[RMDB]
RNA sequence: GGGAACGACUCGAGUAGAGUCGAAAAUAUGGUAAAAGGUGUGUCCGUUCCAUUUGAACUCGGUUACCUUUCAACAAACCGACUUGUGACAAAACAAUUUACAUACAUUCCGAAUGAACUUGAAACAGUUCAGAAACUCGGACAUCAUGUUACAACAUCCAGCUUCAGUAUUCGUACUGAAGCUGGAAAAAGAAACAACAACAACAAC
Reactivity to 2A3 in 0.01 (KOAc 150mM, MgCl2 10mM, bicine 150mM(pH8.5), 24C), signal-to-noise 1, nucleotides 027 to 156: u080a030u030g100g070u210a080a070a060a070g070g000u080g010u010g050u010c020c000g000u020u030c030c030a140u120u000u150g090a060a020c030u010c050g010g050u030u000a070c040c000u020u210u030c160a130a060c040a110a180a020c020c000g010a010c090u050u060g000u030g010a040c070a090a260a050a000c080a050a060u040u080u130a090c030a020u220a060c010a010u080u000c010c000g000a030a080u070g000a020a020c000u000u000g000a090a060a020c010a030g000u000u000c000a000g200a020a040a090c020u000c000g020g000a000c000a020u110c130a000u050g080u100u080a030c030a070a000c010a110